RNA sequence: GGGAACGACUCGAGUAGAGUCGAAAAUGUGGAAAGUGGUUAGUUUAAUAAUGUUAUUAAAGAGACAAGUCUAUCACAAGGGACCAGUUACCAGUGAAACUGUAGACCACCUGAUUCACUGCGAUAGGGUUAGCCAAAGGGAGGAGAGGGCAGAUUGGAUACAAUGACUGUUCGCAGUCAUUGUAUCAAAAGAAACAACAACAACAAC
Reactivity to 2A3 in 0.01 (KOAc 150mM, MgCl2 10mM, bicine 150mM(pH8.5), 24C), signal-to-noise 4, nucleotides 027 to 156: u090g010u030g010g020a090a070a050g020u000g030g020u050u030a040g020u080u100u100a070a060u150a040a110u100g010u060u100a100u060u080a070a070a030g100a010g010a030c020a070a050g030u010c020u060a060u050c020a020c030a190a070g030g000g020a010c010c010a020g020u040u060a030c000c000a000g000u000g040a060a010a020c010u030g010u060a010g040a060c030c020a020c000c040u040g010a080u040u000c020a010c040u020g010c020g020a040u060a050g050g000g030u050u080a020g030c010c020a080a050a020g020g010g040a090g000g040a170g030a080g020g010g000c030a020g020a140u070u150g100
Reactivity to DMS in 0.01 (KOAc 150mM, MgCl2 10mM, bicine 150mM(pH8.5), 24C), signal-to-noise 2, nucleotides 027 to 156: u000g010u010g010g000a100a130a070g030u000g020g010u010u000a110g000u000u000u000a050a070u000a050a120u010g010u000u000a050u000u000a050a060a160g010a220g000a120c030a040a070g030u000c050u000a090u000c050a040c070a060a130g000g010g000a140c020c050a080g020u010u000a130c060c020a050g030u000g040a060a040a110c070u000g010u000a140g030a090c050c040a090c160c030u000g010a160u000u010c020a030c030u020g000c040g000a080u000a100g010g000g010u000u000a130g030c040c050a030a000a080g010g000g010a120g010g020a060g000a150g010g000g050c050a040g000a140u000u000g030
Structure probing data (2A3 and DMS) for a 207-nucleotide construct. For 2A3, 2,714 sequencing reads were counted. 2A3 adducts were read by reverse transcription with SuperScript II with manganese. Values cover nucleotides 27 to 156.